This 207-nucleotide RNA was probed chemically with 2A3 and DMS. The 2A3 profile rests on 2,030 reads. Values cover nucleotides 27 to 156. It was measured as part of the RMDB library OK3TST.
RNA sequence: GGGAACGACUCGAGUAGAGUCGAAAAAGACGUGAUGUGUAUAGAACGUGUAGAGAUCACGCUACCCGUGUACGUGCAACUGGUAAUUAAAAUGAAAAGUAAUAUUCAUGUGUAGUGUCAAUUUUAAAUGAUGAUGAUGAAAUGGAUAAUAUCCAUAUCAAGUAGGCAGAUUCGUCUGCCUACUUGAAAAAGAAACAACAACAACAAC
Reactivity to 2A3 in 0.01 (KOAc 150mM, MgCl2 10mM, bicine 150mM(pH8.5), 24C), signal-to-noise 4, nucleotides 027 to 156: a000g020a010c010g040u050g000a020u000g070u040g060u080a040u040a150g130a130a040c040g020u020g050u070a020g020a000g010a090u050c020a020c080g000c010u030a030c000c050c000g040u020g020u010a070c060g010u010g050c000a070a050c070u040g000g030u060a060a120u090u140a050a090a030a080u090g030a030a050a020a040g040u060a040a060u090a090u120u060c020a000u070g030u010g020u050a020g040u000g010u070c010a040a070u010u040u090u200a080a190a020u070g020a060u040g010a020u000g010a010u040g030a090a110a000u010g040g020a000u060a050a070u100a090u010c000c000a000u020a020
Reactivity to DMS in 0.01 (KOAc 150mM, MgCl2 10mM, bicine 150mM(pH8.5), 24C), signal-to-noise 3, nucleotides 027 to 156: a070g010a050c000g000u010g010a030u020g020u010g020u000a130u010a100g020a110a040c080g020u000g030u000a070g000a120g010a100u010c030a040c000g000c000u000a140c020c010c030g010u020g010u010a050c120g040u000g000c070a070a080c080u000g030g000u000a060a090u000u000a060a020a070a060u010g000a040a070a080a110g000u010a090a080u000a090u000u020c010a000u010g000u010g040u000a110g020u000g010u010c000a070a050u000u020u020u010a020a080a140u010g040a090u000g020a090u000g010a090u000g010a060a070a050u000g020g000a050u010a040a180u020a300u000c000c000a030u000a170